[RMDB]
RNA sequence: GGGAACGACUCGAGUAGAGUCGAAAACUAUUUAUAGACAGAACAGUGGAAAACGUAUAUCGCUAUAAACCUUAUACACCGACUCUUCCAGUCGUACUAUUCCACAUAGGCGAGGCAUAAGCGAAAGGGUGCUGGGUAUAUUCGUAUACCCAGCACCAAAAGAAACAACAACAACAAC
Reactivity to 2A3 in 0.01 (KOAc 150mM, MgCl2 10mM, bicine 150mM(pH8.5), 24C), signal-to-noise 1, nucleotides 027 to 126: c030u060a110u000u070u040a070u050a020g060a000c110a070g010a300a030c080a060g030u050g040g210a000a020a070a000c040g000u000a010u000a040u020c040g000c060u000a000u000a040a000a000c040c110u160u110a050u000a060c190a000c040c050g000a000c000u000c000u030u010c000c060a000g010u000c000g000u000a000c000u040a000u020u000c000c000a000c000a000u040a010g000g080c000g050a000g000g000c000a000u150a030a170g110c020g080a100a090a000g200
An RNA of 177 nucleotides, treated with 2A3 and read out base by base. The reactions ran in a buffer of 150 mM KOAc, 10 mM MgCl2 and 150 mM bicine (pH 8.5), at 24 C. For 2A3, 578 sequencing reads were counted.